Overview: Chemical mapping of a 177-nucleotide RNA with DMS and 2A3.

RNA sequence: GGGAACGACUCGAGUAGAGUCGAAAAGAUAUGGAGCGAGCUUUUGACGCUCAACCACUCGGAAACGAGUGCAAGAGCGAUAAGCCGCUCCUAAGUCAAAACGAGUCAACGUUCGCGUUGACUCGAACAGUUCACGUUAGUUCGCUAACGUGAACUGAAAAGAAACAACAACAACAAC
Reactivity to DMS in 0.01 (KOAc 150mM, MgCl2 10mM, bicine 150mM(pH8.5), 24C), signal-to-noise 2, nucleotides 027 to 126: g000a040u000a290u020g030g000a000g020c000g000a120g020c000u000u010u030u000g020a200c070g000c000u010c000a080a270c300c040a000c000u000c010g010g000a160a100a150c000g000a000g000u000g000c030a040a300g000a010g000c000g000a060u000a030a030g010c010c000g000c000u000c000c000u000a000a040g000u000c040a050a070a100a070c000g000a040g000u000c000a000a000c000g040u000u010c130g000c000g050u000u000g000a010c040u000c000g000a010a100
Reactivity to 2A3 in 0.01 (KOAc 150mM, MgCl2 10mM, bicine 150mM(pH8.5), 24C), signal-to-noise 2, nucleotides 027 to 126: g030a010u090a030u120g000g000a000g000c000g000a050g030c040u090u150u100u220g270a120c040g000c000u000c010a000a010c000c000a000c000u000c000g010g010a010a070a050c000g010a000g000u000g000c010a100a080g000a010g000c010g020a020u030a040a000g000c010c000g010c000u000c000c000u000a000a010g000u000c010a010a000a100a100c030g010a000g000u010c000a000a010c000g040u090u060c300g050c000g200u020u000g000a000c000u000c010g000a010a000
The data come from the RNA Mapping Database (RMDB), library TTRDEL. Values are in units of 0.01, from 0 to 300, in steps of 10. Reactivities are given for positions 27 through 126.